[RMDB]
RNA sequence: GGGAACGACUCGAGUAGAGUCGAAAAGAUAUGGAAAGCUUCGACAUGCGUUACGGAUCGGAAACGAUCCCUAUACGCAACAGCGAGAGCUUUCCUAAGUCAAAAUCAACCGGUUCGCCGGUUGAAAGGACAAUAACUAGUUCGCUAGUUAUUGUCCAAAAGAAACAACAACAACAAC
Reactivity to 2A3 in 0.01 (KOAc 150mM, MgCl2 10mM, bicine 150mM(pH8.5), 24C), signal-to-noise 8, nucleotides 027 to 126: g010a010u040a020u090g000g000a020a000a000g000c000u020u020c010g100a120c070a200u300g000c000g010u010u020a020c040g010g000a000u000c010g020g000a040a040a020c010g000a000u000c000c000c000u250a240u020a080c010g000c030a060a020c040a020g030c000g010a160g020a010g120c000u000u010u000c000c000u000a050a010g020u000c020a010a010a020a300u020c000a000a000c010c000g010g050u070u060c300g040c070c000g020g000u000u010g000a010a000a010
Reactivity to DMS in 0.01 (KOAc 150mM, MgCl2 10mM, bicine 150mM(pH8.5), 24C), signal-to-noise 8, nucleotides 027 to 126: g000a030u010a290u010g000g010a010a010a010g010c000u000u000c000g000a040c080a300u010g010c000g010u000u000a280c300g000g010a010u000c000g000g010a040a060a180c000g000a000u000c000c000c020u000a050u010a010c000g030c000a030a030c250a140g000c010g000a080g010a040g010c000u000u000u000c000c000u000a010a070g000u000c020a080a090a120a120u000c000a010a010c000c000g000g000u010u010c260g010c000c000g010g010u000u000g000a000a050a080
Chemical mapping of a 177-nucleotide RNA with 2A3 and DMS. The DMS profile rests on 10,305 reads. For 2A3 the reverse transcriptase was SuperScript II with manganese. The 2A3 profile rests on 30,721 reads.